[RMDB]
RNA sequence: GGGAACGACUCGAGUAGAGUCGAAAAGCAGCGCGUCUUUGUAGAGCGGACGAAAGCUCUGGCUUCGGGCCCGCUCUCAAGGGUAGCAGACGAUCGAGAGAGGGUCCUCUCGAGAGCUGGGCCAUACGCGGGUAUCUAGCUUCGGCUGGGUACCCGCAAAAGAAACAACAACAACAAC
Reactivity to DMS in 0.01 (KOAc 150mM, MgCl2 10mM, bicine 150mM(pH8.5), 24C), signal-to-noise 5, nucleotides 027 to 126: g000c040a040g010c030g000c010g000u000c010u000u010u000g000u050a030g000a020g020c010g000g010a070c010g000a040a040a060g030c010u000c230u050g010g000c010u000u000c020g020g010g010c150c000c010g010c000u000c000u000c020a030a010g010g000g010u010a080g020c020a070g020a130c140g000a120u010c010g000a020g000a030g000a120g010g010g000u020c060c000u000c000u000c000g000a020g000a120g000c010u000g010g010g010c040c010a080u030a050c180
Reactivity to 2A3 in 0.01 (KOAc 150mM, MgCl2 10mM, bicine 150mM(pH8.5), 24C), signal-to-noise 3, nucleotides 027 to 126: g010c010a000g000c000g000c000g020u000c000u000u020u020g040u110a000g000a000g000c000g000g010a010c010g070a120a050a010g010c020u040c090u160g200g000c010u020u010c010g050g010g010c000c010c000g000c000u000c000u000c000a010a020g030g010g010u170a040g020c020a000g030a030c020g030a050u020c000g000a000g010a000g010a050g070g070g100u070c010c010u000c000u000c000g010a010g000a000g000c010u040g000g020g000c000c000a050u040a080c070

Annotation
The record gives the reactivity of an RNA of 177 nucleotides to DMS and 2A3. High DMS reactivity at an A or C suggests that its Watson-Crick edge is free. For 2A3, 11,116 sequencing reads were counted. For DMS the reverse transcriptase was MarathonRT.